[RMDB]
RNA sequence: GGGAACGACUCGAGUAGAGUCGAAAAGCGCCUUCUGACAAAGGGAUCCAGUCAAUCUGAGCCUUCAUUAUCGCACUCAUCGCCCCGUGACGCUCCGGGGAACUCCAGACCAUGCCGUCACACCAUCCGUACCUGAGGCGUUCGCGCCUCAGGUACGAAAAGAAACAACAACAACAAC
Reactivity to 2A3 in 0.01 (KOAc 150mM, MgCl2 10mM, bicine 150mM(pH8.5), 24C), signal-to-noise 2, nucleotides 027 to 126: g070c030g020c000c000u020u040c030u000g090a040c100a000a090a000g110g000g000a020u050c010c010a010g030u040c070a040a090u020c070u070g020a050g030c000c000u000u070c050a040u000u140a180u120c090g000c050a030c020u030c010a040u110c020g030c020c000c000c000g050u040g000a040c030g000c100u030c040c010g040g000g000g040a040a000c020u000c000c010a000g000a060c000c020a030u050g060c040c050g010u030c000a020c000a010c060c000a010u020c030
Structure probing data (2A3) for a 177-nucleotide construct.
For 2A3 the reverse transcriptase was SuperScript II with manganese.
Conditions: 150 mM KOAc, 10 mM MgCl2 and 150 mM bicine (pH 8.5), 24 C.